[RMDB]
Source information
Structure probing data (DMS and 2A3) for a 177-nucleotide construct. For DMS the reverse transcriptase was MarathonRT. The RNA was probed in 150 mM KOAc, 10 mM MgCl2 and 150 mM bicine (pH 8.5) at 24 C.

RNA sequence: GGGAACGACUCGAGUAGAGUCGAAAACAUGCCAGCAGCAUGCCGUUAAAUACUGCUUCACAGUGCUCGCUCACUGAGAAAGUUUCCACUGAAAGAUAUUAACAGUAAUUAUGAGUACUUCAGUGGAGUUGGAAUGGAAUUUCGAUUCCAUUCCAACAAAAGAAACAACAACAACAAC
Reactivity to DMS in 0.01 (KOAc 150mM, MgCl2 10mM, bicine 150mM(pH8.5), 24C), signal-to-noise 5, nucleotides 027 to 126: c080a050u010g010c060c040a090g000c070a100g000c020a020u000g000c030c050g020u030u020a070a080a090u010a040c050u000g000c050u010u000c070a080c040a030g020u000g000c050u040c110g010c140u020c020a020c010u010g000a100g010a060a080a120g010u000u020u000c000c000a000c010u000g000a030a020a030g010a110u000a030u000u010a100a130c100a090g010u010a070a100u010u010a140u020g000a100g000u000a020c030u000u000c010a000g010u000g010g000a020
Reactivity to 2A3 in 0.01 (KOAc 150mM, MgCl2 10mM, bicine 150mM(pH8.5), 24C), signal-to-noise 9, nucleotides 027 to 126: c020a010u040g020c010c040a030g010c010a000g010c010a060u050g120c020c010g060u060u100a060a080a030u140a070c020u010g010c000u060u040c040a040c010a080g010u010g030c020u070c130g050c020u070c030a030c010u020g010a010g080a070a090a020g020u030u100u000c000c000a000c010u000g040a060a060a030g070a080u040a030u110u130a140a060c020a030g130u150a090a090u150u170a070u160g010a010g020u010a030c000u000u000c010a010g000u000g000g010a020